An RNA of 177 nucleotides, treated with 2A3 and DMS and read out base by base. The reactions ran in a buffer of 150 mM KOAc, 10 mM MgCl2 and 150 mM bicine (pH 8.5), at 24 C. Source: RMDB library OK1LIB, as collected in RNAgym. 2A3 adducts were read by reverse transcription with SuperScript II with manganese. Reactivities are given for positions 27 through 126.

RNA sequence: GGGAACGACUCGAGUAGAGUCGAAAAUUUUUAGAGCCAAACCAGCCAUCUUUAUUGAGAGACCACCAAUCCGAAAUACUCUCCGUUAAAUUUGGUGGAUAGUCGUAGCCCUCUACUUCGAACGUUAAUCGCUAUUACCUUUCGAGGUAAUAGCGAUAAAAGAAACAACAACAACAAC
Reactivity to 2A3 in 0.01 (KOAc 150mM, MgCl2 10mM, bicine 150mM(pH8.5), 24C), signal-to-noise 4, nucleotides 027 to 126: u140u130u040u050u090a070g030a010g050c010c010a020a080a070c020c000a020g070c010c020a050u020c020u120u230u130a180u160u170g050a110g000a000g030a060c000c000a000c000c000a010a030u070c090c030g030a020a070a070u170a050c030u000c020u010c020c010g040u020u070a010a040a190u150u090u030g010g010u050g010g000a020u070a030g010u030c030g040u030a100g020c000c020c000u000c010u010a060c000u060u100c010g040a040a060c000g050u000u210a050
Reactivity to DMS in 0.01 (KOAc 150mM, MgCl2 10mM, bicine 150mM(pH8.5), 24C), signal-to-noise 2, nucleotides 027 to 126: u020u010u020u000u030a050g000a170g000c000c020a050a050a090c100c050a060g020c040c000a030u030c020u000u000u010a130u020u000g000a180g010a030g010a120c070c060a050c050c060a010a020u010c130c110g030a080a020a030u020a120c010u000c010u020c000c050g000u000u020a010a100a110u000u000u020g020g000u030g000g030a060u010a040g000u030c000g000u000a060g010c090c020c030u010c010u000a040c010u010u000c000g010a050a050c070g000u000u010a050